[RMDB]
RNA sequence: GGGAACGACUCGAGUAGAGUCGAAAAGAUAUGGAUCGAUGAAAGGCGACGAUCUACCGGUUCGGAAACGAACCGUAGGGAGCCUUGUCGAUCCUAAGUCAAACUAAAGAAGUUCGCUUCUUUAGAACAUUAUUAUAAAGUUCGCUUUAUAAUAAUGAAAAGAAACAACAACAACAAC
Reactivity to DMS in 0.01 (KOAc 150mM, MgCl2 10mM, bicine 150mM(pH8.5), 24C), signal-to-noise 5, nucleotides 027 to 126: g000a020u000a020u010g000g010a010u000c000g010a020u010g010a060a060a020g020g030c000g010a080c300g010a010u010c000u000a010c130c150g010g010u000u010c000g000g000a010a010a030c000g000a000a000c000c000g020u000a000g000g010g000a010g010c000c010u000u000g010u000c000g000a010u000c000c000u000a000a060g000u000c010a140a140a300c000u000a000a020a010g010a010a020g010u010u020c300g020c000u000u000c000u000u010u000a000g010a140a260
Reactivity to 2A3 in 0.01 (KOAc 150mM, MgCl2 10mM, bicine 150mM(pH8.5), 24C), signal-to-noise 4, nucleotides 027 to 126: g000a000u010a000u040g000g000a000u010c010g010a010u040g260a290a200a150g020g000c020g060a300c030g000a160u000c000u010a010c070c220g000g000u000u000c000g000g010a000a010a000c000g000a010a010c020c000g000u000a010g000g000g000a010g000c000c000u020u090g000u010c000g000a010u000c000c000u000a000a000g000u000c000a020a050a160c010u010a010a010a000g010a010a010g030u090u290c300g060c110u020u000c000u030u010u020a010g000a040a020